The record gives the reactivity of an RNA of 207 nucleotides to 2A3 and DMS. The reactions ran in a buffer of 150 mM KOAc, 10 mM MgCl2 and 150 mM bicine (pH 8.5), at 24 C.

RNA sequence: GGGAACGACUCGAGUAGAGUCGAAAAUAGAGGAAGUAAAAGUCGUAACAAGGUUUUGUUCUCGAGUAACGAGGAUGGAUUGGACUCCCUUCCGCGGUGACACUCACAGAAGCCUUUGCAGCCUCGCAAGAGGUCUGGCGCGACAGUAAAGAAUGCCCGAUAAUAGGACCUUCGGGUCCUAUUAUCGAAAAGAAACAACAACAACAAC
Reactivity to 2A3 in 0.01 (KOAc 150mM, MgCl2 10mM, bicine 150mM(pH8.5), 24C), signal-to-noise 2, nucleotides 027 to 156: u160a020g080a090g040g070a130a060g010u160a070a070a040a030g020u010c020g040u050a010a050c020a080a050g040g000u040u030u040u100g080u190u100c140u080c120g000a040g040u050a100a060c020g000a010g000g000a020u040g000g000a010u040u200g060g020a040c020u050c020c000c000u090u000c020c030g020c020g020g010u060g040a040c030a020c100u010c010a040c010a080g040a030a010g030c000c010u030u030u080g010c010a010g020c040c000u000c000g020c020a030a050g010a000g030g020u130c050u040g060g000c030g000c010g040a000c050a000g050u100a040a110a030g040a020a060u060g030c000c010
Reactivity to DMS in 0.01 (KOAc 150mM, MgCl2 10mM, bicine 150mM(pH8.5), 24C), signal-to-noise 1, nucleotides 027 to 156: u000a090g030a090g010g000a160a050g000u000a070a100a140a150g060u000c030g020u000a070a170c060a070a080g010g020u000u010u000u000g020u000u000c010u020c070g000a080g030u020a080a070c010g000a010g030g000a060u020g020g020a110u000u020g020g020a240c180u000c060c060c010u020u010c000c020g000c000g010g010u010g000a200c080a040c040u000c010a060c090a100g010a060a070g020c010c010u000u000u000g020c070a130g010c000c000u010c030g020c240a060a250g010a020g040g000u010c020u020g000g010c040g020c020g020a040c020a080g010u000a030a080a070g010a040a050u000g010c040c070
It was measured as part of the RMDB library ARCHII. Values cover nucleotides 27 to 156.